The record gives the reactivity of an RNA of 207 nucleotides to 2A3. For 2A3, 746 sequencing reads were counted. The data come from the RNA Mapping Database (RMDB), library OK3TST. The reactions ran in a buffer of 150 mM KOAc, 10 mM MgCl2 and 150 mM bicine (pH 8.5), at 24 C.
[RMDB]
RNA sequence: GGGAACGACUCGAGUAGAGUCGAAAAGGAUGGGUGCCGGUGUCCAGGUGGGACAGGACUUGGGCUUGGAUAGCAGCUCAGGAGGUAGCUAGCAGUCGGUGAGAGAUUUAGGCUUGAAGAUCAAUCUUGAUGGGUUGGCUGAGGGAGGGGGUGCAGAAUUACUAUCAUAGUUCGCUAUGAUAGUAAUAAAAGAAACAACAACAACAAC
Reactivity to 2A3 in 0.01 (KOAc 150mM, MgCl2 10mM, bicine 150mM(pH8.5), 24C), signal-to-noise 1, nucleotides 027 to 156: g070g000a050u030g000g030g010u080g040c060c000g020g060u040g010u000c020c050a030g080g000u080g010g020g010a060c050a050g030g030a030c000u020u080g000g000g010c070u090u100g010g030a050u150a070g010c020a000g040c000u010c010a030g020g020a000g020g000u030a010g000c000u020a020g020c020a000g070u050c060g050g030u100g010a090g000a000g000a040u020u000u250a040g000g010c050u090u110g000a040a050g070a070u040c030a050a010u070c110u040u110g030a030u080g010g120g080u210u080g040g000c200u220g000a070g060g000g000a240g010g000g000g000g000u020g060c010a000g000a080